[RMDB]
The data come from the RNA Mapping Database (RMDB), library OK1LIB. An RNA of 177 nucleotides, treated with 2A3 and DMS and read out base by base.
RNA sequence: GGGAACGACUCGAGUAGAGUCGAAAAGAGUUUGGCUAAGAAUGCACGCUUGGAAGUGUACUUUGUCAAGAACUUGGCAAGUCAAAUCCUCAAAAUUGACAUGACGCCACACAACCCAUUGCGUGUGCGGGCUUAUAAUCUUCGGAUUAUAAGCCCGAAAAGAAACAACAACAACAAC
Reactivity to 2A3 in 0.01 (KOAc 150mM, MgCl2 10mM, bicine 150mM(pH8.5), 24C), signal-to-noise 3, nucleotides 027 to 126: g070a020g000u070u050u010g000g020c010u010a010a060g120a200a120u070g010c010a010c040g070c070u080u100g060g020a140a040g040u020g010u070a050c000u120u110u020g010u010c020a010a020g020a090a050c140u030u060g050g000c050a060a000g040u030c050a060a040a180u120c050c050u110c060a130a280a100a100u020u070g060a010c050a050u100g040a030c080g000c040c000a000c000a010c000a020a110c070c000c010a060u070u190g030c100g010u000g010u000g050
Reactivity to DMS in 0.01 (KOAc 150mM, MgCl2 10mM, bicine 150mM(pH8.5), 24C), signal-to-noise 2, nucleotides 027 to 126: g000a190g060u000u010u000g010g040c000u050a150a140g040a080a060u010g000c050a060c060g000c120u030u000g010g000a080a130g030u000g000u000a010c110u000u030u080g000u000c000a000a000g020a130a070c150u000u000g000g040c130a040a080g040u000c030a090a040a100u000c010c040u000c180a060a040a050a070u000u040g020a120c010a060u000g000a030c180g000c100c000a060c010a020c050a110a110c100c050c060a130u060u040g000c130g060u000g000u010g010
2A3 adducts were read by reverse transcription with SuperScript II with manganese.
The DMS profile rests on 2,308 reads.